[RMDB]
Description
The record gives the reactivity of an RNA of 170 nucleotides to 2A3 and DMS. The RNA was probed in 150 mM KOAc, 10 mM MgCl2 and 150 mM bicine (pH 8.5) at 24 C. For 2A3, 20,332 sequencing reads were counted. Reactivities are given for positions 27 through 129.

RNA sequence: GGGAACGACUCGAGUAGAGUCGAAAAGAAACAAAGGCGCUUAAAGAGUUAUAUGGCCCCGUUGAUCCUACUUUCUUACACAGAUUCUAUUCACUUAAGGCUGCAGUCCAUGGGUGGAAGAUGGUUGACACCCUUGAGUUCGCUCAAGGGAAAAGAAACAACAACAACAAC
Reactivity to 2A3 in 0.01 (KOAc 150mM, MgCl2 10mM, bicine 150mM(pH8.5), 24C), signal-to-noise 9, nucleotides 027 to 129: g030a000a050a000c060a050a060a030g040g010c010g060c050u060u120a060a120a040g120a040g050u260u090a140u050a050u270g040g000c000c000c000c000g020u010u050g010a070u020c000c020u010a110c030u060u050u070c010u030u120a070c080a000c000a090g070a120u100u000c010u080a260u070u030c010a020c050u040u070a070a030g030g000c020u110g040c120a030g040u030c020c000a040u110g020g010g000u010g000g010a010a000g030a030u070g040g020u040u040g040a020c020a080
Reactivity to DMS in 0.01 (KOAc 150mM, MgCl2 10mM, bicine 150mM(pH8.5), 24C), signal-to-noise 8, nucleotides 027 to 129: g020a090a080a080c070a050a090a070g010g010c130g010c070u010u020a070a110a120g040a060g020u010u010a070u060a100u020g010g030c000c020c050c040g020u030u050g000a050u020c020c030u000a120c100u020u030u000c000u000u000a050c080a100c080a070g000a090u000u000c020u030a080u010u020c040a040c130u000u000a070a060g000g000c010u000g040c120a010g010u020c050c050a040u050g000g000g000u000g000g000a030a030g000a010u030g030g000u010u010g010a110c220a110